The record gives the reactivity of an RNA of 207 nucleotides to DMS and 2A3. For 2A3 the reverse transcriptase was SuperScript II with manganese. It was measured as part of the RMDB library RSTRND.
[RMDB]
RNA sequence: GGGAACGACUCGAGUAGAGUCGAAAAAGGUUGGCGAAAGCUUCCACUGUGAUGCAGGUCGAGAGUGGGUCUCCUCUCGCAAAUCAAAGAUCCAAACAAAAUGUAACUGCGAACAACAUCGUUCCUUUCGCUCGCAAAGCUGCUGCUGUAGCUUAAUAGGUUAAAUAUAGUUCGCUAUAUUUAACCUAAAAGAAACAACAACAACAAC
Reactivity to DMS in 0.01 (KOAc 150mM, MgCl2 10mM, bicine 150mM(pH8.5), 24C), signal-to-noise 2, nucleotides 027 to 156: a060g000g040u000u000g020g010c030g000a110a040a090g020c040u000u010c020c010a090c060u000g030u000g010a150u000g040c060a050g000g040u010c010g000a080g010a020g030u010g000g010g000u000c030u000c050c000u000c040u000c020g000c030a070a080a110u010c060a090a070a040g020a050u000c030c010a070a080a160c150a080a080a070a100u000g020u010a040a030c050u000g000c010g010a060a030c040a120a090c090a060u000c030g000u010u000c000c010u000u000u000c030g050c000u000c040g000c020a050a080a240g000c000u000g030c020u010g030c000u010g030u000a050g010c020u000u000a050a220u000
Reactivity to 2A3 in 0.01 (KOAc 150mM, MgCl2 10mM, bicine 150mM(pH8.5), 24C), signal-to-noise 7, nucleotides 027 to 156: a000g080g010u050u020g010g010c020g030a060a020a010g010c030u080u020c030c020a090c060u090g030u090g060a050u100g020c030a030g010g060u100c020g000a000g000a000g020u040g010g010g020u010c010u040c030c010u010c000u000c030g140c180a020a020a010u060c020a000a010a050g030a010u040c020c010a050a080a060c070a030a090a100a040u210g060u140a080a050c050u060g000c020g000a030a020c050a040a010c010a150u060c040g010u010u020c010c000u030u050u040c030g000c030u020c030g030c030a060a070a020g000c010u030g010c020u050g010c060u100g030u030a010g010c000u050u060a070a040u040